Chemical mapping of a 177-nucleotide RNA with 2A3 and DMS. 2A3 adducts were read by reverse transcription with SuperScript II with manganese. The data come from the RNA Mapping Database (RMDB), library M2PK50. Reactivities are given for positions 27 through 126. The RNA was probed in 150 mM KOAc, 10 mM MgCl2 and 150 mM bicine (pH 8.5) at 24 C.

RNA sequence: GGGAACGACUCGAGUAGAGUCGAAAAGGGUGAUCGUUCGCGAUCACCCAAAGAAGCACGAAACGCCAAGAAAACCCGGAACAUUGGUAUGGAAGCCUGAGAAAACUGACAAGUUCGCUUGUCAGAAGUAUUCAUAGGACUUCGGUCCUAUGAAUACAAAAGAAACAACAACAACAAC
Reactivity to 2A3 in 0.01 (KOAc 150mM, MgCl2 10mM, bicine 150mM(pH8.5), 24C), signal-to-noise 1, nucleotides 027 to 126: g000g000g000u000g000a020u020c010g030u020u010c130g000c000g130a010u000c010a000c000c000c000a000a000a010g000a020a010g030c080a010c030g040a000a170a040c020g000c020c030a060a010g080a100a130a030a030c000c000c000g070g010a030a040c040a220u050u160g030g030u060a010u110g010g050a090a000g030c010c000u060g020a050g040a100a120a040a090c000u000g010a000c010a010a000g020u050u000c280g000c060u000u000g000u020c000a000g000a010a020
Reactivity to DMS in 0.01 (KOAc 150mM, MgCl2 10mM, bicine 150mM(pH8.5), 24C), signal-to-noise 2, nucleotides 027 to 126: g010g000g010u000g010a010u000c000g020u000u000c140g020c010g000a010u000c000a000c020c000c000a000a010a060g000a100a080g000c050a040c060g010a060a070a100c060g000c000c030a050a040g000a070a040a100a100c010c020c010g000g000a060a070c090a140u010u010g010g010u000a040u010g000g020a100a100g000c040c030u020g020a160g000a060a140a110a170c000u010g000a000c000a000a020g030u000u000c260g000c000u000u000g000u000c010a000g020a020a070